[RMDB]
RNA sequence: GGGAACGACUCGAGUAGAGUCGAAAAUAUGCAUAGAUCGGUAAAGCUAUCGUAGAUGUGAUGUUUCCUAAAACGAGUAUUAUACUCGUUUACUAUCAAACACUUUCCUGAUCUAUCAACCAAUACACACAUGGUUUCUAAAUCUAUCAAGUGGUGGUCUUACAACCACUUUCGAGUGGUUGUAAGAAAAAGAAACAACAACAACAAC
Reactivity to 2A3 in 0.01 (KOAc 150mM, MgCl2 10mM, bicine 150mM(pH8.5), 24C), signal-to-noise 9, nucleotides 027 to 156: u240a060u080g040c030a000u000a000g000a000u000c010g000g010u020a010a010a010g000c050u070a070u170c100g060u050a070g040a130u090g090u080g140a110u110g160u100u160u180c060c080u110a040a040a000a000c000g010a000g020u030a090u300u110a100u150a030c010u000c000g000u010u000u000a020c000u020a010u040c020a040a050a010c010a010c020u010u010u010c010c000u010g000a000u000c000u010a010u020c000a000a010c010c000a020a050u190a100c090a000c020a010c020a110u090g100g000u020u010u030c040u050a080a140a090u030c050u100a100u130c070a170a070g060u060g090g040u030g020g020
Reactivity to DMS in 0.01 (KOAc 150mM, MgCl2 10mM, bicine 150mM(pH8.5), 24C), signal-to-noise 3, nucleotides 027 to 156: u010a070u000g010c050a100u000a030g020a010u000c020g010g000u000a020a070a040g030c050u000a110u010c100g020u000a130g020a160u010g010u010g020a170u000g010u010u000u010c060c050u010a070a040a030a040c010g030a020g020u000a110u010u000a230u010a030c020u000c000g020u000u000u010a060c090u000a060u000c020a040a120a070c140a050c010u000u000u000c090c020u010g010a020u000c010u000a030u000c050a050a190c040c010a040a110u010a100c080a050c020a060c080a120u000g010g010u000u000u000c050u010a070a080a070u010c090u000a120u000c090a080a100g000u000g010g030u010g010g000